[RMDB]
RNA sequence: GGGAACGACUCGAGUAGAGUCGAAAAGAUAUGGAGUCCUGUUGCUCAACAGCUGGUCGGUCGGAAACGACCGCCAGACAUGAGCACAGGACUCCUAAGUCAAAAGUUCAUCGUUCGCGAUGAACAACAAUUUCCUCUCGUUCGCGAGAGGAAAUUGAAAAGAAACAACAACAACAAC
Reactivity to DMS in 0.01 (KOAc 150mM, MgCl2 10mM, bicine 150mM(pH8.5), 24C), signal-to-noise 2, nucleotides 027 to 126: g010a070u000a220u010g000g000a010g020u010c000c020u000g000u010u000g000c000u000c000a040a040c300a210g000c000u000g000g030u030c070g050g010u010c010g010g000a030a040a100c020g010a010c000c000g000c010c020a000g030a000c120a280u010g090a050g020c000a020c010a020g000g000a000c010u000c000c000u020a000a030g030u000c080a130a060a200a090g000u000u000c000a000u010c000g030u010u010c290g000c010g040a000u000g000a000a010c020a060a070
Reactivity to 2A3 in 0.01 (KOAc 150mM, MgCl2 10mM, bicine 150mM(pH8.5), 24C), signal-to-noise 1, nucleotides 027 to 126: g000a000u050a020u130g000g000a020g000u000c000c000u040g150u300u250g070c020u000c010a280a300c090a300g040c010u000g010g150u300c190g030g000u000c020g010g070a060a010a040c000g020a010c010c020g010c010c010a020g010a010c000a160u300g010a010g010c020a020c000a000g010g000a000c010u010c000c000u010a000a000g000u000c000a000a000a000a150g040u000u000c000a020u020c000g060u080u000c300g140c060g160a020u010g000a000a010c020a000a000
This 177-nucleotide RNA was probed chemically with DMS and 2A3. The 2A3 profile rests on 1,333 reads. For DMS, 1,304 sequencing reads were counted. Conditions: 150 mM KOAc, 10 mM MgCl2 and 150 mM bicine (pH 8.5), 24 C. 2A3 is a SHAPE reagent: it acylates the 2'-hydroxyl of flexible nucleotides of all four kinds.